[RMDB]
RNA sequence: GGGAACGACUCGAGUAGAGUCGAAAAUCUUGCAGGUUCGCCUGCAAGAAAAUAGAAACUUGUAAAGGGGCAGUCCCCUAGCCCCACUCAAAAGGGCGAUAAAAAGAGCGGUCUUCGGACCGCUCAAGCUUAUUUAGAGGUUCGCCUCUAAAUAAGCAAAAGAAACAACAACAACAAC
Reactivity to DMS in 0.01 (KOAc 150mM, MgCl2 10mM, bicine 150mM(pH8.5), 24C), signal-to-noise 1, nucleotides 027 to 126: u010c000u000u000g010c000a020g000g020u000u000c290g020c000c000u020g000c020a010a000g000a010a080a100a050u010a160g010a090a210a130c180u020u010g000u010a030a120a200g020g000g000g000c050a030g000u000c000c020c000c070u000a110g040c000c020c000c020a160c150u000c070a000a070a100a080g010g000g030c050g000a090u000a030a090a040a090a140g000a010g020c000g040g000u000c000u000u000c260g030g000a020c000c000g000c000u000c000a000a100
An RNA of 177 nucleotides, treated with DMS and read out base by base. For DMS the reverse transcriptase was MarathonRT. Conditions: 150 mM KOAc, 10 mM MgCl2 and 150 mM bicine (pH 8.5), 24 C.